[RMDB]
RNA sequence: GGGAACGACUCGAGUAGAGUCGAAAAUUCCUUCUUCUGUGCUCCUGCCUCUCCUUGUCGGUGAACCCCCUGGCCUUGGGUUUCCUCCCAGGUCCGAAAUCAACCUCCAUGGUUUCCUGCCUGGGCCCCAUUAAUACUGCUUCGGCAGUAUUAAUGGAAAAGAAACAACAACAACAAC
Reactivity to DMS in 0.01 (KOAc 150mM, MgCl2 10mM, bicine 150mM(pH8.5), 24C), signal-to-noise 3, nucleotides 027 to 126: u000u000c010c010u000u000c040u010u010c050u000g020u000g010c000u000c020c030u020g020c040c020u000c020u000c020c030u000u000g010u000c050g000g010u000g010a100a160c050c020c020c030c020u010g020g020c050c010u000u010g010g000g000u000u000u000c070c060u010c010c010c000a010g010g000u000c060c100g010a030a020a030u000c080a030a130c080c030u010c050c060a190u000g000g010u000u000u000c000c050u000g020c000c010u000g010g000g000c190c120